An RNA of 207 nucleotides, treated with 2A3 and DMS and read out base by base. It was measured as part of the RMDB library OK3TST. The 2A3 profile rests on 901 reads. Reactivities are given for positions 27 through 156. The RNA was probed in 150 mM KOAc, 10 mM MgCl2 and 150 mM bicine (pH 8.5) at 24 C. For DMS, 3,678 sequencing reads were counted.

RNA sequence: GGGAACGACUCGAGUAGAGUCGAAAACUUGAGCCCCCGAAACUCUGACUCGGAGGACAGUGAGCGUCGCAGAAACCACAACAUCCUGGAGCGCCAGCGCCGCAACGACCUUCGGUCCAGCUUUCUCACGCUCAGGGACCACGUGCCGGAGUUGGUACUAAAAGACUAGAUUCGUCUAGUCUUUUAGAAAAGAAACAACAACAACAAC
Reactivity to 2A3 in 0.01 (KOAc 150mM, MgCl2 10mM, bicine 150mM(pH8.5), 24C), signal-to-noise 2, nucleotides 027 to 156: c030u050u120g030a000g050c030c000c040c000c040g040a070a090a050c040u040c010u030g010a030c010u020c150g030g000a070g030g030a040c040a110g050u040g060a050g010c020g040u010c060g010c030a020g050a090a070a070c060c070a040c040a240a040c000a140u090c000c040u030g030g010a050g060c040g040c030c040a040g010c050g000c080c040g030c030a050a050c060g040a060c020c030u090u050c000g000g030u010c020c040a010g000c000u050u060u030c010u020c010a000c020g010c000u000c020a040g040g000g020a020c000c050a050c050g040u090g000c010c060g050g020a040g040u050u060g000g000u030a040
Reactivity to DMS in 0.01 (KOAc 150mM, MgCl2 10mM, bicine 150mM(pH8.5), 24C), signal-to-noise 2, nucleotides 027 to 156: c030u000u000g010a210g020c020c020c000c020c010g000a110a010a080c020u010c040u010g000a070c050u010c010g030g010a260g070g000a110c060a170g020u010g020a090g040c050g030u010c040g020c110a100g000a100a060a090c050c030a300c060a050a130c090a110u000c030c040u010g050g010a040g010c040g020c040c020a070g000c080g000c020c080g030c080a120a050c050g000a110c050c040u000u000c060g030g020u000c020c050a110g000c080u000u000u000c010u000c030a020c050g000c030u000c000a120g000g040g010a120c030c000a090c050g010u010g050c020c000g030g020a190g000u000u010g010g020u020a130